An RNA of 177 nucleotides, treated with 2A3 and DMS and read out base by base. 2A3 adducts were read by reverse transcription with SuperScript II with manganese. The DMS profile rests on 1,487 reads. The reactions ran in a buffer of 150 mM KOAc, 10 mM MgCl2 and 150 mM bicine (pH 8.5), at 24 C. For 2A3, 1,996 sequencing reads were counted.
RNA sequence: GGGAACGACUCGAGUAGAGUCGAAAACUUUCGGUACGAAUGAGGAUUUUCCUGUCGUCAACACAUAUUCCUGUGGGAUAUGGAACCGUUACGGAAUAGGCAAACGACCUAUUCCCUAAUGCAGUUCGUCAGAAACAUUGUUCGCAAUGUUUCUGACAAAAGAAACAACAACAACAAC
Reactivity to 2A3 in 0.01 (KOAc 150mM, MgCl2 10mM, bicine 150mM(pH8.5), 24C), signal-to-noise 3, nucleotides 027 to 126: c010u050u080u090c020g040g030u040a000c000g000a030a010u270g100a180g050g030a070u100u060u140u220c000c020u000g010u010c000g010u030c030a040a020c010a020c010a060u010a020u060u080c020c020u140g140u300g120g010g020a000u020a010u010g020g000a000a000c000c020g020u010u040a010c030g000g000a010a010u010a000g000g040c060a140a290a130c060g070a100c010c000u000a000u000u020c010c000c000u180a100a090u150g060c050a070g020u120u150c020
Reactivity to DMS in 0.01 (KOAc 150mM, MgCl2 10mM, bicine 150mM(pH8.5), 24C), signal-to-noise 2, nucleotides 027 to 126: c060u000u000u000c030g030g010u010a000c030g000a020a030u010g000a020g030g030a180u000u010u000u000c000c000u010g000u000c010g010u000c110a020a180c170a060c010a010u000a000u000u000c000c000u050g030u020g060g000g000a020u000a010u000g000g010a000a020c010c010g000u020u000a070c300g000g010a010a000u000a000g000g030c060a180a090a180c300g000a140c000c000u000a000u000u000c000c000c060u000a030a050u000g000c220a100g020u000u010c120